[RMDB]
RNA sequence: GGGAACGACUCGAGUAGAGUCGAAAACCCCUUCGAAGCGAUGGGGGGGGUCACUAGGAACACAGGGGACCCGUGGAUCCGUGGGAUUACCCUCUCCACCCUCCUAACACACUCCUUCCCCCCUGCGGAUUAAACAAUGCUUCGGCAUUGUUUAAUCAAAAGAAACAACAACAACAAC
Reactivity to DMS in 0.01 (KOAc 150mM, MgCl2 10mM, bicine 150mM(pH8.5), 24C), signal-to-noise 2, nucleotides 027 to 126: c030c000c000c220u000u000c060g000a130a060g000c100g010a090u000g000g000g000g000g000g000g000g000u000c180a100c170u010a130g000g010a020a090c050a050c220a060g000g000g000g010a110c090c070c090g000u000g000g020a100u000c090c040g000u010g010g000g000a300u000u000a050c030c000c000u000c000u010c000c020a060c030c050c000u000c000c010u000a080a130c150a070c190a090c060u000c020c010u000u010c000c010c050c000c000c000u010g030c130g010
This 177-nucleotide RNA was probed chemically with DMS.